[RMDB]
RNA sequence: GGGAACGACUCGAGUAGAGUCGAAAAGCUCAGAGUGUGUCGCCCCGUCGUCUAGUGCUGGUUCUAGGGCUGGGGCGUCAGCAUCCAGGUCUGACGGGACGGGCAGUAUCUCGCCAUCAACGAUAAAACGAAACUACUUAUUCGUAAGUAGUUUCGUAAAAGAAACAACAACAACAAC
Reactivity to DMS in 0.01 (KOAc 150mM, MgCl2 10mM, bicine 150mM(pH8.5), 24C), signal-to-noise 7, nucleotides 027 to 126: g010c040u000c040a100g010a070g010u000g020u000g010u000c000g010c010c000c010c010g010u000c020g010u000c010u000a030g020u000g010c050u000g000g010u010u010c020u000a070g000g000g010c030u010g020g000g010g010c030g010u010c040a030g000c030a040u010c050c070a080g010g000u000c030u010g010a050c030g010g000g000a040c040g010g000g010c040a040g010u010a080u010c020u000c040g010c070c060a070u010c130a040a060c090g010a110u010a050a080a090
Reactivity to 2A3 in 0.01 (KOAc 150mM, MgCl2 10mM, bicine 150mM(pH8.5), 24C), signal-to-noise 3, nucleotides 027 to 126: g050c020u030c050a020g030a010g060u080g010u020g020u040c010g020c000c010c010c000g000u020c010g030u000c020u020a030g010u020g110c070u090g110g070u090u030c020u050a060g020g080g000c040u080g030g000g000g020c000g010u000c000a000g010c000a030u060c040c040a040g040g080u030c050u090g010a030c010g000g000g030a020c040g000g030g010c010a010g010u050a060u080c030u030c030g010c040c020a120u140c040a050a060c050g060a060u070a150a070a010